[RMDB]
RNA sequence: GGGAACGACUCGAGUAGAGUCGAAAAAGCGCGCGCUACGGCGCGCGCAAUAUGAUGAUUUAACAACGCUCGUAUGAUUAUGAUUACAUUUAACUGCAAGCUGAAAGCCUCGCGUACGCGCGAGGCAGAAUACAAUUCGAUUCGUCGAAUUGUAUUCAAAAGAAACAACAACAACAAC
Reactivity to 2A3 in 0.01 (KOAc 150mM, MgCl2 10mM, bicine 150mM(pH8.5), 24C), signal-to-noise 4, nucleotides 027 to 126: a000g010c020g060c010g000c010g000c070u070a050c300g080g000c020g000c010g000c000g000c000a000a000u060a060u050g080a050u050g020a030u030u090u210a050a040c060a000a050c070g000c000u030c030g000u050a060u100g110a210u060u040a040u090g130a060u040u210a100c020a050u060u010u130a090a010c000u020g010c020a020a010g000c000u040g050a090a030a020g000c000c000u010c010g000c000g010u010a020c200g010c010g000c000g050a000g020g000c010a010
An RNA of 177 nucleotides, treated with 2A3 and read out base by base.